[RMDB]
RNA sequence: GGGAACGACUCGAGUAGAGUCGAAAAUGAGCCAUUCGCGGACCAACUGGCGUGACUCGCGAAGGCUGUUCAGGUUGGCGGGCAGUUGUGCGUCCGAACGCUUGAAAUUGCGGCGCGCGAGCCGACCAUGUUAAUGGUUGUUCGCAACCAUUAACAUAAAAGAAACAACAACAACAAC
Reactivity to 2A3 in 0.01 (KOAc 150mM, MgCl2 10mM, bicine 150mM(pH8.5), 24C), signal-to-noise 7, nucleotides 027 to 126: u180g020a000g010c040c050a300u030u000c020g000c020g020g010a030c010c020a100a130c130u160g140g010c100g070u050g040a040c020u010c070g000c000g000a010a020g040g000c020u030g030u030u040c020a010g000g030u020u030g020g010c020g030g040g000c040a090g040u100u100g030u060g030c010g020u030c020c010g040a080a030c030g020c080u050u100g070a080a120a080u170u160g040c040g010g000c010g000c010g000c010g020a010g000c000c000g010a020c010c000
Reactivity to DMS in 0.01 (KOAc 150mM, MgCl2 10mM, bicine 150mM(pH8.5), 24C), signal-to-noise 9, nucleotides 027 to 126: u010g000a060g010c010c010a160u000u000c020g030c010g000g010a060c040c030a090a080c080u010g010g010c120g010u000g010a060c050u000c010g010c010g000a030a040g000g000c000u000g010u000u000c060a070g000g010u000u000g010g020c020g010g010g010c060a090g010u000u010g020u000g010c090g010u000c020c040g010a050a080c140g000c110u000u000g000a050a070a130u010u000g010c060g010g010c030g000c030g010c050g010a130g000c000c000g000a040c040c020